[RMDB]
RNA sequence: GGGAACGACUCGAGUAGAGUCGAAAAGGCGAUUGAGAGGCCCUCUCAUUAAUGCGGAGCUGUCACGCUGACAGAAUGAUAUUAGAUGUCCGCUUCCGGUUCCAUCGCGGCGAUGAUUACAUAGGACAUCGAUUACCCAUUCGCUUCGGGGAAGCAAAUCCAUCCUAUACUUCGGUAUAGGAUGGAUAAAAGAAACAACAACAACAAC
Reactivity to 2A3 in 0.01 (KOAc 150mM, MgCl2 10mM, bicine 150mM(pH8.5), 24C), signal-to-noise 5, nucleotides 027 to 156: g050g000c030g050a050u060u140g020a050g040a040g080g100c010c070c020u000c000u000c010a080u080u200a140a090u150g040c060g020g010a020g030c020u020g050u040c010a020c160g110c120u090g020a020c020a060g080a060a110u130g060a030u020a100u180u170a070g020a040u020g010u000c000c020g010c000u040u000c010c010g060g000u080u000c030c010a030u050c050g020c050g100g020c060g030a050u060g020a050u080u180a090c070a090u170a110g040g000a000c000a010u000c010g000a010u000u070a040c010c010c010a030u050u070c050g000c000u040u050c030g010g000g010g050a010a010g020c040a050a090
Reactivity to DMS in 0.01 (KOAc 150mM, MgCl2 10mM, bicine 150mM(pH8.5), 24C), signal-to-noise 3, nucleotides 027 to 156: g010g000c020g000a130u000u020g000a120g010a300g020g020c030c040c000u010c070u000c050a150u020u000a040a200u010g030c040g020g010a100g040c050u010g000u000c020a080c120g020c040u010g020a180c060a120g000a060a070u000g020a140u010a090u010u000a120g020a100u000g000u000c000c030g000c070u000u010c030c030g020g010u000u000c020c020a080u000c060g010c070g020g010c100g010a070u000g010a090u010u000a070c080a120u000a100g030g010a040c010a030u000c010g020a110u000u000a040c030c000c020a110u010u000c040g000c050u000u000c050g010g010g020g000a100a120g030c040a020a090

About this RNA: An RNA of 207 nucleotides, treated with 2A3 and DMS and read out base by base. The RNA was probed in 150 mM KOAc, 10 mM MgCl2 and 150 mM bicine (pH 8.5) at 24 C. Values cover nucleotides 27 to 156. Values are in units of 0.01, from 0 to 300, in steps of 10. As a SHAPE reagent, 2A3 marks flexible, mostly unpaired nucleotides at the ribose 2'-OH. For DMS the reverse transcriptase was MarathonRT.